[RMDB]
RNA sequence: GGGAACGACUCGAGUAGAGUCGAAAAAGUUCCCGACGAGGAGCCCGCAGGUGGGAGGAUCAGCCACCGGAGGGGACGCGAUGCCAAAGAGUGGGGGAAAUCUCGCGAGGGAAAUCCCAAGAAGGUCACACGGCCAAGUUCGCUUGGCCGAAAAGAAACAACAACAACAAC
Reactivity to DMS in 0.01 (KOAc 150mM, MgCl2 10mM, bicine 150mM(pH8.5), 24C), signal-to-noise 4, nucleotides 027 to 129: a240g050u050u000c000c020c050g020a080c120g010a090g030g010a090g030c140c010c040g000c110a180g040g030u000g050g020g030a050g030g010a030u030c120a120g040c000c060a030c060c000g050g030a220g060g000g010g020a110c110g030c160g010a080u050g000c050c060a070a100a070g030a050g060u030g020g000g020g000g010a010a040a160u030c000u020c030g010c210g020a110g030g020g000a010a070a150u020c020c000c030a070a030g040a090a040g000g000u020c000a130c130a000
Reactivity to 2A3 in 0.01 (KOAc 150mM, MgCl2 10mM, bicine 150mM(pH8.5), 24C), signal-to-noise 3, nucleotides 027 to 129: a000g030u020u020c000c000c000g030a010c020g030a000g030g010a010g080c000c030c000g090c070a000g000g060u050g020g030g010a050g000g010a040u040c090a030g060c000c030a020c040c020g020g020a020g010g000g000g000a030c000g000c010g090a020u130g020c020c020a070a070a000g090a010g050u070g000g000g000g000g000a050a040a000u050c040u000c000g060c020g000a120g010g000g010a020a040a070u000c020c030c000a030a040g060a020a000g010g000u050c010a030c020a000

Annotation:
This 170-nucleotide RNA was probed chemically with DMS and 2A3. For 2A3, 5,752 sequencing reads were counted. It was measured as part of the RMDB library 15KLIB. For 2A3 the reverse transcriptase was SuperScript II with manganese. For DMS the reverse transcriptase was MarathonRT. The DMS profile rests on 8,839 reads.